[RMDB]
RNA sequence: GGGAACGACUCGAGUAGAGUCGAAAACUGUGUACUUUGUAUACCUAUGUAUUUGACUAGCUUAGAUGCCUUAUGUAAGUGGAAUCAUACCGUAUUUGUCCUCUUGUGAUUGGCUUAUCUCAUUAGCAUAAAGCCCUCAAAUUUUCUCAUAUUGUAGACGUGUUAGAAAUUUCGAUUUCUAACACGUAAAAGAAACAACAACAACAAC
Reactivity to DMS in 0.01 (KOAc 150mM, MgCl2 10mM, bicine 150mM(pH8.5), 24C), signal-to-noise 2, nucleotides 027 to 156: c040u010g020u000g030u000a060c030u010u000u010g010u010a070u000a030c040c050u000a070u000g010u000a100u000u000u010g000a110c040u010a160g010c030u010u000a080g010a110u000g030c020c020u010u000a040u010g050u000a050a090g030u000g000g000a090a060u000c050a050u000a030c070c010g000u010a150u000u000u010g000u000c050c030u000c050u010u000g040u000g000a090u010u000g010g000c020u010u000a060u000c090u000c120a100u000u000a100g030c030a050u000a080a050a080g010c010c040c140u000c030a040a050a110u000u010u000u000c020u010c030a160u000a090u000u000g030u010a210g010
Reactivity to 2A3 in 0.01 (KOAc 150mM, MgCl2 10mM, bicine 150mM(pH8.5), 24C), signal-to-noise 6, nucleotides 027 to 156: c040u020g010u020g010u070a030c030u070u130u230g030u040a030u010a070c020c020u090a090u180g060u040a090u080u070u080g050a070c040u050a030g020c020u050u040a030g020a110u090g020c010c010u130u090a070u090g050u040a020a070g000u040g070g110a050a010u050c020a020u030a090c050c000g060u070a120u040u080u100g080u030c020c010u040c060u050u050g030u010g060a050u060u040g000g000c000u030u030a030u050c040u000c030a100u100u060a020g010c000a020u060a080a070a040g030c010c010c000u030c020a030a130a120u060u050u070u010c020u000c030a080u140a070u250u200g040u120a120g010
The record gives the reactivity of an RNA of 207 nucleotides to DMS and 2A3. Values cover nucleotides 27 to 156. Conditions: 150 mM KOAc, 10 mM MgCl2 and 150 mM bicine (pH 8.5), 24 C.